[RMDB]
RNA sequence: GGGAACGACUCGAGUAGAGUCGAAAAAUGCAGUGGGGUCAGCGACGACUUCUGCCUCCACCAAGAAUGCAAAGGGGAAAUCCAAUGUCGUCCCGAACACCAGGAAUGGUCACUUUAUUUUAGCCGAGGUCACUACGCCAUUCGUGGCGUAGUGACCAAAAGAAACAACAACAACAAC
Reactivity to 2A3 in 0.01 (KOAc 150mM, MgCl2 10mM, bicine 150mM(pH8.5), 24C), signal-to-noise 1, nucleotides 027 to 126: a000u090g000c040a000g010u000g000g000g000g000u070c000a020g000c100g130a040c000g000a000c090u260u100c000u040g000c000c000u000c000c000a000c000c000a040a140g090a050a080u180g020c000a030a030a030g020g000g010g000a000a090a280u190c050c040a020a060u030g020u000c000g060u000c000c000c000g060a050a000c070a000c230c000a010g040g190a000a000u060g010g000u000c000a000c090u300u180u260a290u300u300u000u120a040g040c000c010g010a000